An RNA of 177 nucleotides, treated with 2A3 and DMS and read out base by base.
Reactivities are given for positions 27 through 126.
2A3 adducts were read by reverse transcription with SuperScript II with manganese.
The reactions ran in a buffer of 150 mM KOAc, 10 mM MgCl2 and 150 mM bicine (pH 8.5), at 24 C.
Values are in units of 0.01, from 0 to 300, in steps of 10.

RNA sequence: GGGAACGACUCGAGUAGAGUCGAAAAAUCAUAGCAUAGGAUUGGGGAGCUAGGAGUCAGAGUGGGUGUGACUCGUGUGUGUUUGGCAGCUGCUCGUUGAGAACCUUGAAAGUCGAGGCUCCCAGUCGCUCUACAUAGGGUUCGCCCUAUGUAGAGCAAAAGAAACAACAACAACAAC
Reactivity to 2A3 in 0.01 (KOAc 150mM, MgCl2 10mM, bicine 150mM(pH8.5), 24C), signal-to-noise 1, nucleotides 027 to 126: a000u060c060a040u100a080g090c040a050u060a150g000g180a080u050u060g000g040g000g030a020g000c020u050a020g000g070a020g040u060c050a010g010a000g030u030g010g060g070u010g030u060g060a020c030u000c070g050u130g000u050g000u000g010u100u010u060g110g030c020a090g030c000u000g010c030u000c000g050u020u110g040a030g040a140a020c000c030u030u090g020a080a110a050g080u120c060g030a040g030g040c000u010c010c010c000a000g020u010c060
Reactivity to DMS in 0.01 (KOAc 150mM, MgCl2 10mM, bicine 150mM(pH8.5), 24C), signal-to-noise 2, nucleotides 027 to 126: a080u010c050a090u010a090g010c090a120u010a120g000g000a050u010u000g050g000g010g010a060g030c020u000a060g000g000a120g000u000c020a060g000a040g030u000g000g000g000u000g030u010g000a030c040u000c020g010u020g000u000g030u000g020u000u000u000g010g020c040a040g000c020u010g010c040u000c030g010u020u000g010a150g000a100a070c020c020u000u000g010a060a070a080g010u010c080g000a110g000g010c030u000c000c000c000a080g000u010c080